Source: RMDB library M2RFPK, as collected in RNAgym. An RNA of 207 nucleotides, treated with DMS and 2A3 and read out base by base. The RNA was probed in 150 mM KOAc, 10 mM MgCl2 and 150 mM bicine (pH 8.5) at 24 C. The DMS profile rests on 1,504 reads.
RNA sequence: GGGAACGACUCGAGUAGAGUCGAAAACCUGGUUUAGGGUUCCAGGCUAGCCCUAUCUAUCGGUCUAGAUGCGAGCGCUUAAGCUCAAAUUGAGUGGCUGAGUUAGUGGUGAACGUAUCCCUAUGUUAAAACGGUAGCUGCUUCGGCAGCUACCGAACCUAUUUGCACAGUUCGCUGUGCAAAUAGGAAAAGAAACAACAACAACAAC
Reactivity to DMS in 0.01 (KOAc 150mM, MgCl2 10mM, bicine 150mM(pH8.5), 24C), signal-to-noise 1, nucleotides 027 to 156: c010c010u030g030g030u010u000u000a050g030g000g000u010u000c000c050a080g000g000c020u000a300g010c010c000c000u000a060u010c030u010a110u000c030g000g030u000c050u010a300g020a030u000g000c300g000a090g110c020g050c270u000u000a090a190g020c000u000c030a010a190a080u000u000g020a300g000u040g020g000c000u020g000a120g000u010u000a080g010u020g020g050u000g020a160a030c070g000u020a160u000c000c000c000u000a260u000g020u000u000a040a090a080a230c000g000g100u000a040g010c020u010g050c000u000u080c270g040g000c010a010g020c030u000a000c000c000g000a040a010
Reactivity to 2A3 in 0.01 (KOAc 150mM, MgCl2 10mM, bicine 150mM(pH8.5), 24C), signal-to-noise 2, nucleotides 027 to 156: c000c010u010g020g040u030u070u090a050g000g020g040u100u070c010c010a000g030g030c030u040a040g000c000c000c000u000a000u000c010u020a180u080c000g030g010u000c010u010a020g000a010u030g020c000g000a010g000c050g020c230u300u300a130a050g000c010u010c010a010a030a010u020u040g020a070g170u160g050g000c010u000g020a000g010u000u010a030g000u100g120g000u040g010a070a040c040g050u060a100u110c010c000c000u020a060u090g060u030u130a100a080a030a020c010g000g000u000a010g000c000u020g000c000u030u010c170g070g000c010a000g000c000u000a000c000c000g010a000a000
Values cover nucleotides 27 to 156.